[RMDB]
RNA sequence: GGGAACGACUCGAGUAGAGUCGAAAAGUCAUGCCUUCGGGCAUGACAGGUACCGAGAGGUACCAAAUAGCGUACAGAAGACACAGACUGUACGCUAAAAAAGUGUGUGUUCAAUAAGCUCCAAUUGAACACACACUAAAAUGGGGCAAGUGUGUUAUAAAUACGUCGGUUUCGACCGACGUAUUUAAAAAGAAACAACAACAACAAC
Reactivity to 2A3 in 0.01 (KOAc 150mM, MgCl2 10mM, bicine 150mM(pH8.5), 24C), signal-to-noise 1, nucleotides 027 to 156: g000u000c000a000u000g010c000c000u040u060c210g000g080g000c010a000u000g000a000c000a030g010g000u000a000c020c020g000a000g000a020g100g000u000a000c000c000a040a050a050u040a000g000c000g010u000a000c000a000g020a060a030g110a240c090a010c000a080g130a040c000u010g000u000a000c000g000c010u010a030a040a000a000a000a000g000u010g000u000g000u010g030u000u000c000a020a030u120a250a040g000c070u030c080c070a010a070u000u000g000a000a010c000a000c000a000c000a000c020u000a000a000a000a020u030g010g000g000g000c080a110a080g120u100g020u010g030u060u120a120